[RMDB]
Description:
Structure probing data (2A3 and DMS) for a 177-nucleotide construct. Conditions: 150 mM KOAc, 10 mM MgCl2 and 150 mM bicine (pH 8.5), 24 C. Reactivities are given for positions 27 through 126.
RNA sequence: GGGAACGACUCGAGUAGAGUCGAAAACUUGCAAGGUUCGCCUUGCAAGAAAUAAAACCUCACCAACCAACAAAAAUAAGAGCAUGGAUGGAAAAAGAAUAAAAACAGCAGUGUUCGCACUGCUGAACUGGAUAUAAAAGUUCGCUUUUAUAUCCAGAAAAGAAACAACAACAACAAC
Reactivity to 2A3 in 0.01 (KOAc 150mM, MgCl2 10mM, bicine 150mM(pH8.5), 24C), signal-to-noise 3, nucleotides 027 to 126: c000u000u000g000c000a010a010g030g020u070u100c160g100c090c000u000u000g020c000a000a000g010a000a040a000u050a000a030a000a020c020c020u070c020a060c020c020a010a050c020c000a030a090c010a040a220a150a080a090u270a170a110g060a010g090c110a040u060g020g030a010u010g020g030a050a100a040a040a050g080a040a080u150a100a120a020a010a010c000a000g000c000a000g010u000g030u070u100c140g040c050a010c000u000g000c010u000g000a000a000
Reactivity to DMS in 0.01 (KOAc 150mM, MgCl2 10mM, bicine 150mM(pH8.5), 24C), signal-to-noise 2, nucleotides 027 to 126: c020u000u000g040c020a040a020g000g020u000u010c240g020c030c010u010u000g020c000a000a010g030a020a060a090u000a040a120a150a120c030c000u010c190a070c080c030a000a110c030c040a010a020c090a010a200a070a160a120u000a030a080g000a120g000c100a020u000g020g020a140u010g020g000a050a070a020a030a170g030a070a070u060a020a030a090a030a060c000a000g030c000a010g010u000g000u000u010c180g000c000a000c010u000g010c000u020g000a000a040